[RMDB]
RNA sequence: GGGAACGACUCGAGUAGAGUCGAAAAAGAAGGAACUGGACAUCAAUAUUUAUAGUCAGAGCCUAGCGGCCUUGUGCGCGCACGGUAUAUAUAGAUGUCUAGAAGAUGCAGAGAUCAAGCCAGGUGAAGCUACUGAAUUGUUCGCAAUUCAGUAGCUAAAAGAAACAACAACAACAAC
Reactivity to 2A3 in 0.01 (KOAc 150mM, MgCl2 10mM, bicine 150mM(pH8.5), 24C), signal-to-noise 4, nucleotides 027 to 126: a000g160a030a060g090g040a100a120c000u020g020g000a000c000a000u000c030a060a060u030a060u130u260u060a130u170a090g170u180c070a060g040a040g140c020c020u050a020g000c010g030g020c010c000u110u300g110u160g040c300g000c000g000c040a050c050g050g010u050a050u000a000u000a000u000a090g000a010u000g000u010c000u010a000g010a040a010g020a010u060g000c050a020g030a000g020a070u070c070a060a000g000c030c010a010g040g030u110g060a030
Reactivity to DMS in 0.01 (KOAc 150mM, MgCl2 10mM, bicine 150mM(pH8.5), 24C), signal-to-noise 3, nucleotides 027 to 126: a100g040a110a100g040g000a100a150c000u000g020g010a030c040a000u010c020a070a070u000a000u010u000u010a020u030a170g020u030c240a110g000a120g010c000c030u000a300g040c040g000g010c000c030u050u000g020u040g000c080g010c050g050c050a050c190g000g010u000a040u000a010u040a010u020a050g010a010u010g020u000c000u000a010g000a060a090g000a100u010g020c090a020g010a070g000a050u020c060a070a040g000c090c000a020g000g000u000g020a110
An RNA of 177 nucleotides, treated with 2A3 and DMS and read out base by base.
For 2A3 the reverse transcriptase was SuperScript II with manganese.
The 2A3 profile rests on 2,660 reads.
The DMS profile rests on 3,175 reads.